The record gives the reactivity of an RNA of 170 nucleotides to 2A3 and DMS. Source: RMDB library 15KLIB, as collected in RNAgym.
[RMDB]
RNA sequence: GGGAACGACUCGAGUAGAGUCGAAAAAGCCCCGCACGGGAUAGGAGUAAGACCAUAGCGAUGGGGGGAGAUGCUAGGAGUUGGGGGAGACCGAAGCGAGGAGGAAAGCAAAGAAAGCAACGGGGCUGCAGUGGUCUCUUCGGAGACCACAAAAGAAACAACAACAACAAC
Reactivity to 2A3 in 0.01 (KOAc 150mM, MgCl2 10mM, bicine 150mM(pH8.5), 24C), signal-to-noise 2, nucleotides 027 to 129: a000g040c000c000c000c000g020c000a150c100g030g000g010a030u130a190g070g010a030g010u130a110a000g050a010c050c000a060u120a010g060c030g120a070u100g010g010g000g000g030g020a010g000a000u080g000c020u000a000g030g000a060g000u110u120g020g000g000g000g000a050g000a000c020c000g000a000a000g030c020g000a000g000g000a010g010g010a030a020a000g100c000a000a000a100g030a030a040a010g050c040a020a060c080g000g000g070g010c020u000g020c090a040
Reactivity to DMS in 0.01 (KOAc 150mM, MgCl2 10mM, bicine 150mM(pH8.5), 24C), signal-to-noise 3, nucleotides 027 to 129: a080g040c060c030c070c060g100c120a100c190g000g060g020a030u010a090g040g000a050g030u060a120a000g030a120c070c030a070u000a070g030c100g020a120u060g000g000g000g000g000g000a040g000a080u080g010c060u050a050g040g010a000g000u010u010g000g000g000g000g000a140g050a110c070c040g000a090a080g000c090g040a000g020g030a020g000g050a030a040a030g060c230a110a060a100g030a110a120a020g010c100a050a190c100g010g050g020g010c050u030g020c090a000
2A3 adducts were read by reverse transcription with SuperScript II with manganese.